RNA sequence: GGGAACGACUCGAGUAGAGUCGAAAACCGAAGCCCCAUUGAGGGAUAAUACAGGCUCUCCCGUCCAACUCCUAUUCCAACACGUCCUCGUCGUACAGAGUGGUAACAUGUGUCACCACAUAUCCAACAUAGUGUCGCAUCUUCGGAUGCGACACAAGCCUGAGAAUUACUUCGGUAAUUCUCAGGCAAAAGAAACAACAACAACAAC
Reactivity to 2A3 in 0.01 (KOAc 150mM, MgCl2 10mM, bicine 150mM(pH8.5), 24C), signal-to-noise 1, nucleotides 027 to 156: c000c000g000a080a010g050c000c000c010c010a060u020u060g010a300g020g000g000a050u190a240a040u080a140c140a030g000g000c000u000c000u020c010c000c000g000u030c010c050a070a040c000u020c000c000u000a000u150u050c040c010a060a000c140a040c100g070u100c000c000u050c050g090u080c070g000u060a030c030a090g120a020g120u000g040g040u080a170a000c080a120u140g050u000g070u060c000a010c050c040a020c020a000u080a040u070c050c050a000a050c010a190u180a130g000u000g000u000c000g030c000a000u000c000u000u000c000g050g000a000u000g000c000g050a000c000a000c030a000a000
Source: RMDB library M2RFPK, as collected in RNAgym.
Structure probing data (2A3) for a 207-nucleotide construct.
The RNA was probed in 150 mM KOAc, 10 mM MgCl2 and 150 mM bicine (pH 8.5) at 24 C.
Values cover nucleotides 27 to 156.
The 2A3 profile rests on 423 reads.